[RMDB]
RNA sequence: GGGAACGACUCGAGUAGAGUCGAAAAAGGAAUCACCCGGCCUUAUUUGAGCGUGGUUCCCAAAGCGCUGGUCGCAUUCGAAGUCGAAUCUGAGCCGGAGUCGAGUGACCAAUGGCAAGACCGGGCACGCUUUUAAUACCUUCGGGUAUUAAAAGCGAAAAGAAACAACAACAACAAC
Reactivity to DMS in 0.01 (KOAc 150mM, MgCl2 10mM, bicine 150mM(pH8.5), 24C), signal-to-noise 2, nucleotides 027 to 126: a110g000g020a100a130u000c120a140c070c030c000g000g000c010c010u000u000a070u000u000u000g010a090g030c060g020u000g000g010u000u000c000c000c010a070a090a160g040c050g010c020u000g000g030u000c000g020c040a080u010u020c040g020a160a080g000u000c010g020a040a060u000c050u000g000a120g000c100c030g010g010a050g020u000c010g000a080g010u010g010a110c100c070a030a080u030g000g020c090a040a050g010a070c030c040g010g000g010c080a140
Reactivity to 2A3 in 0.01 (KOAc 150mM, MgCl2 10mM, bicine 150mM(pH8.5), 24C), signal-to-noise 2, nucleotides 027 to 126: a000g110g020a110a030u100c000a060c010c040c000g010g030c000c000u070u160a190u050u090u160g070a020g010c110g030u090g020g050u180u100c060c000c000a000a090a030g010c170g000c060u030g010g010u010c020g010c060a110u010u100c010g050a050a010g110u090c030g000a030a070u040c050u140g050a060g120c080c050g000g010a000g030u020c030g000a060g040u100g020a010c010c050a070a100u130g040g000c030a050a010g030a020c030c010g030g000g000c030a010

About this RNA: Source: RMDB library OK2TST, as collected in RNAgym. This 177-nucleotide RNA was probed chemically with DMS and 2A3. The 2A3 profile rests on 1,519 reads. DMS adducts were read by reverse transcription with MarathonRT. Conditions: 150 mM KOAc, 10 mM MgCl2 and 150 mM bicine (pH 8.5), 24 C.